[RMDB]
RNA sequence: GGGAACGACUCGAGUAGAGUCGAAAAAGUCAGAGGGCGCUACCAUGCAAACUAGGGCUGGCUACUCUUGCACAGAAUCACAUCUCGAUAAUUGUCAGUGCAAGAAGGACAAUUAUACCAUUUAAUGAAAACGUUUACCUGUUCGCAGGUAAACGAAGAAUUUAAGCGGGUUCGCCCGCUUAAAUUCAAAAGAAACAACAACAACAAC
Reactivity to 2A3 in 0.01 (KOAc 150mM, MgCl2 10mM, bicine 150mM(pH8.5), 24C), signal-to-noise 2, nucleotides 027 to 156: a000g000u030c020a020g020a070g080g070g020c010g000c040u060a130c040c030a050u190g030c030a070a010a050c000u050a070g010g070g010c020u040g030g000c030u080a080c000u020c000u000u000g020c010a000c000a020g130a100a060u170c070a030c020a250u050c070u090c120g040a020u000a000a020u060u020g000u000c000a000g010u000g020c000a000a000g000a000a020g000g000a000c000a000a010u050u000a010u030a110c060c070a100u100u120u170a210a160u120g070a110a000a020a000c000g000u000u000u000a000c000c000u020g010u080u080c200g030c040a000g000g000u010a000a000a000c000g000a000a010